Chemical mapping of a 207-nucleotide RNA with 2A3 and DMS.
Conditions: 150 mM KOAc, 10 mM MgCl2 and 150 mM bicine (pH 8.5), 24 C.
Values are in units of 0.01, from 0 to 300, in steps of 10.
It was measured as part of the RMDB library OK3TST.
RNA sequence: GGGAACGACUCGAGUAGAGUCGAAAAUGGAUUCACUGCAGAAAAUACGCUGCAGUUGGUUAAAGAUGGAUGUCGACACCGUAUCGCGGUCGAUGAAGACAGCCAUCUUCUCUCCGCAUUUGGAGGGACUGUGCUGUCCUCAUUAGCACCAGGAUAAUCUAGAGGGGAAGUUCGCUUCCCCUCUAGAAAAAGAAACAACAACAACAAC
Reactivity to 2A3 in 0.01 (KOAc 150mM, MgCl2 10mM, bicine 150mM(pH8.5), 24C), signal-to-noise 2, nucleotides 027 to 156: u120g010g020a020u080u090c110a030c010u000g020c010a000g010a020a180a060a050u220a120c060g030c020u020g000c020a030g010u060u030g040g000u100u120a140a110a020g040a020u060g080g000a050u050g050u150c010g000a040c060a060c090c030g060u050a050u050c150g000c040g100g010u020c010g000a010u000g000a040a000g000a000c000a000g000c010c010a020u050c060u090u000c010u000c000u000c000c020g120c290a300u150u250u300g000g000a000g000g020g000a010c020u010g110u190g010c000u000g000u010c000c000u000c000a010u030u050a010g010c030a000c020c010a030g000g090a020u160a130a020
Reactivity to DMS in 0.01 (KOAc 150mM, MgCl2 10mM, bicine 150mM(pH8.5), 24C), signal-to-noise 2, nucleotides 027 to 156: u010g010g000a170u000u010c050a110c010u010g000c040a040g010a060a110a140a180u010a150c170g000c000u000g000c000a030g020u000u010g050g010u000u000a030a060a060g010a090u010g000g010a080u000g000u010c020g010a250c010a090c040c030g010u000a020u010c050g020c040g000g000u000c000g020a020u000g020a000a080g010a010c000a020g020c030c000a080u000c040u000u000c000u010c000u000c000c000g010c300a300u010u010u010g030g000a060g030g030g000a020c140u000g010u010g030c020u000g000u000c000c010u010c020a040u010u000a030g010c070a020c010c020a080g010g000a050u000a040a190